[RMDB]
Structure probing data (DMS and 2A3) for a 177-nucleotide construct. It was measured as part of the RMDB libraries RFM100 and RFMREP.

RNA sequence: GGGAACGACUCGAGUAGAGUCGAAAAACGACAUCGCGGUUGCGCGUCGGCGCCGACCCGCUUGAGCGGUCCCCGACGCGUCAACGUCGCGCCGGCUGCCCGGUAAACCGGCAAUCGACGACCGAGCGACUUGUAGUGAAUUCGUUCACUACAAGUCAAAAGAAACAACAACAACAAC
Reactivity to DMS in 0.01 (KOAc 150mM, MgCl2 10mM, bicine 150mM(pH8.5), 24C), signal-to-noise 6, nucleotides 027 to 126: a110c060g030a060c130a090u010c060g010c060g010g010u000u000g010c020g010c010g000u000c000g010g010c220g030c220c110g010a030c060c030c060g010c100u010u030g000a120g010c020g000g010u000c020c060c000c000g010a000c000g010c000g000u020c040a020a050c060g000u010c020g010c090g000c040c000g000g010c060u010g010c050c020c030g000g010u030a030a110a130c030c010g010g010c020a070a050u010c020g000a070c030g000a130c030c010g000a140g010c190
Reactivity to 2A3 in 0.01 (KOAc 150mM, MgCl2 10mM, bicine 150mM(pH8.5), 24C), signal-to-noise 9, nucleotides 027 to 126: a000c070g050a030c030a100u120c060g010c020g070g000u030u050g010c000g000c000g000u010c000g000g040c080g060c080c070g020a040c070c080c020g030c070u210u300g080a050g040c030g000g000u030c010c010c000c000g000a000c000g000c000g060u020c010a010a000c010g030u040c000g000c000g000c000c000g010g000c030u080g040c020c040c000g000g040u120a100a070a040c010c000g010g000c000a010a070u100c020g040a030c020g030a030c010c020g020a020g070c040
Reactivities are rounded to 0.1 and cut off at 0 and 3. Values cover nucleotides 27 to 126.